[RMDB]
The data come from the RNA Mapping Database (RMDB), library OK3TST. Structure probing data (2A3 and DMS) for a 207-nucleotide construct. Conditions: 150 mM KOAc, 10 mM MgCl2 and 150 mM bicine (pH 8.5), 24 C.
RNA sequence: GGGAACGACUCGAGUAGAGUCGAAAAGUCCAGAUCCUCGGCGUUGGCCAUCCCGAAGGGGGUCAUCUUGCAGGUCUGCCGCCCCAUGCUGGGCACGCAGCCGGGCUUGUGGUUGCAAUCGCAGUGCAGGGGGAUCAGCAUCAUCUGGGCCUGCUCGUGUAAAAGUGAAGUUCGCUUCACUUUUACAAAAAGAAACAACAACAACAAC
Reactivity to 2A3 in 0.01 (KOAc 150mM, MgCl2 10mM, bicine 150mM(pH8.5), 24C), signal-to-noise 2, nucleotides 027 to 156: g020u010c000c000a000g010a080u050c010c010u030c080g050g010c060g110u030u100g010g000c000c050a100u070c030c030c030g160a210a270g100g000g000g000g000u040c020a070u040c000u040u100g010c020a030g000g040u020c050u070g060c030c020g050c000c000c000c010a020u100g000c030u090g020g050g100c050a030c080g020c010a010g000c000c010g110g000g020c090u110u260g070u180g050g000u040u000g000c000a060a120u110c070g000c070a020g030u020g050c020a030g020g010g030g000g010a050u070c060a030g020c000a030u150c010a030u010c090u070g010g000g020c020c010u020g020c010u010c040g080
Reactivity to DMS in 0.01 (KOAc 150mM, MgCl2 10mM, bicine 150mM(pH8.5), 24C), signal-to-noise 2, nucleotides 027 to 156: g040u000c010c020a050g030a040u000c020c010u000c060g050g020c050g060u000u030g010g050c000c100a120u000c050c010c000g000a110a140g000g000g020g030g030u000c040a090u000c040u010u010g020c040a040g010g000u000c060u010g000c020c110g020c020c010c000c020a190u010g000c050u020g000g020g000c000a190c240g000c030a130g040c000c030g010g020g050c070u000u010g000u000g010g050u000u000g000c020a100a090u010c040g030c030a080g000u000g040c040a100g030g000g030g000g040a080u000c050a130g000c040a200u000c060a070u020c060u010g020g010g020c020c040u000g000c020u010c050g010